[RMDB]
RNA sequence: GGGAACGACUCGAGUAGAGUCGAAAAGCGUGCGAAGUCACUGUAAGUUUGGUCACAAGGCGAGAAGCCGAACCAAGAGAGAGAGACUCUACGAGCAAGACGAAUGGAUAGACACAGUAGCACGCGAGGGUAAUACAUACUUCGGUAUGUAUUACCCAAAAGAAACAACAACAACAAC
Reactivity to 2A3 in 0.01 (KOAc 150mM, MgCl2 10mM, bicine 150mM(pH8.5), 24C), signal-to-noise 8, nucleotides 027 to 126: g000c000g000u000g010c030g080a150a020g040u050c030a020c080u020g040u070a050a040g010u050u030u060g080g010u040c060a060c080a300a070g020g000c020g010a100g080a270a020g040c000c000g000a010a000c020c010a050a010g040a000g000a000g010a010g000a000g030a040c010u010c010u020a070c070g050a040g060c060a090a070g070a050c010g070a040a040u080g020g070a060u050a170g020a010c020a000c010a090g050u050a010g000c000a000c000g010c000g010a080
Reactivity to DMS in 0.01 (KOAc 150mM, MgCl2 10mM, bicine 150mM(pH8.5), 24C), signal-to-noise 7, nucleotides 027 to 126: g000c010g050u000g010c010g000a130a120g000u000c100a110c050u000g000u010a050a260g010u000u000u000g010g000u000c060a140c210a080a120g010g000c000g010a190g010a120a180g000c000c010g000a070a020c060c050a060a060g000a050g000a050g000a160g000a110g010a060c010u000c000u010a090c130g000a130g010c120a080a060g000a030c030g010a180a040u020g000g010a080u030a050g010a040c080a090c140a050g000u010a200g000c000a010c000g010c000g020a110